Chemical mapping of a 177-nucleotide RNA with 2A3 and DMS. Conditions: 150 mM KOAc, 10 mM MgCl2 and 150 mM bicine (pH 8.5), 24 C. Source: RMDB library OK2TRN, as collected in RNAgym.

RNA sequence: GGGAACGACUCGAGUAGAGUCGAAAACACGUUGAGCGGUUCAUCGCCACCGGCAAGCGAUUCGGCAAUCUGCAGUGAUGAGUACACGGGCGGCAGCAGCGUUAAAUCACGCUCUGAGGUGACUGUACGUGCGUACUCAAUUCGUUGAGUACGCACGAAAAGAAACAACAACAACAAC
Reactivity to 2A3 in 0.01 (KOAc 150mM, MgCl2 10mM, bicine 150mM(pH8.5), 24C), signal-to-noise 2, nucleotides 027 to 126: c100a010c090g040u060u120g080a030g020c030g040g060u200u180c040a060u070c040g030c070c040a040c030c010g070g080c040a070a030g020c040g050a070u090u110c070g040g000c010a070a090u050c050u170g000c010a000g020u080g070a090u090g000a000g030u050a050c050a030c020g010g090g010c000g050g010c030a000g010c010a020g030c020g050u080u070a060a120a080u180c050a010c020g000c020u000c000u120g130a080g020g040u060g040a070c010u090g030u050a080
Reactivity to DMS in 0.01 (KOAc 150mM, MgCl2 10mM, bicine 150mM(pH8.5), 24C), signal-to-noise 3, nucleotides 027 to 126: c070a120c090g010u010u000g000a130g030c050g000g010u010u000c100a090u010c030g010c050c040a030c120c050g000g050c070a110a110g020c050g010a100u010u010c080g030g000c040a140a080u020c080u000g020c060a040g010u000g010a060u000g000a120g010u010a080c090a050c040g000g000g010c120g000g000c000a060g010c110a060g030c030g010u000u000a010a060a120u010c170a060c040g010c010u010c010u040g000a060g030g000u000g000a090c090u000g020u000a070